[RMDB]
RNA sequence: GGGAACGACUCGAGUAGAGUCGAAAAUGACGUUAAACUGCUGACUCAUACAUACUGACACCGGUUGCUCAACAGGCUGUGUGGGACAAUAGAAUAACAAGCCUGUCAAUUUGAGCUUGACGGCUGCAAAACCUGCAGUACUUCGGUACUGCAGGAAUCAGCUUUUAUAGUUCGCUAUAAAAGCUGAAAAAGAAACAACAACAACAAC
Reactivity to DMS in 0.01 (KOAc 150mM, MgCl2 10mM, bicine 150mM(pH8.5), 24C), signal-to-noise 2, nucleotides 027 to 156: u000g000a120c070g000u000u000a060a100a150c050u020g000c080u000g010a120c040u000c010a050u000a060c060a110u010a140c060u020g000a100c050a100c020c040g000g020u010u010g040c010u000c040a040a100c030a050g000g000c030u000g010u010g030u000g010g070g040a150c040a060a110u030a100g020a090a140u000a130a060c000a040a040g030c010c010u000g000u000c000a050a080u000u000u010g020a110g000c090u000u010g050a040c050g010g020c000u020g010c070a060a070a070a130c000c000u000g000c000a020g010u000a000c000u000u000c260g070g050u000a010c000u000g000c030a000g010g000a010a060
Reactivity to 2A3 in 0.01 (KOAc 150mM, MgCl2 10mM, bicine 150mM(pH8.5), 24C), signal-to-noise 4, nucleotides 027 to 156: u080g020a010c080g020u040u060a100a110a080c070u100g040c030u040g050a050c030u050c030a010u070a100c000a020u150a080c070u080g090a050c020a020c070c020g100g020u090u060g010c010u020c020a020a030c010a030g000g000c010u020g020u020g010u040g150g000g040a010c010a010a150u080a090g130a090a030u070a050a030c040a000a020g020c010c020u050g020u020c000a000a040u020u070u100g020a010g020c000u010u010g010a010c000g000g030c050u020g020c050a030a030a020a150c000c010u000g000c000a000g010u000a000c000u020u040c120g090g000u000a000c000u000g000c000a010g000g000a000a010
An RNA of 207 nucleotides, treated with DMS and 2A3 and read out base by base. High 2A3 reactivity points to a flexible backbone, as in loops and unpaired stretches. The DMS profile rests on 4,843 reads. The 2A3 profile rests on 4,025 reads. For DMS the reverse transcriptase was MarathonRT. The reactions ran in a buffer of 150 mM KOAc, 10 mM MgCl2 and 150 mM bicine (pH 8.5), at 24 C.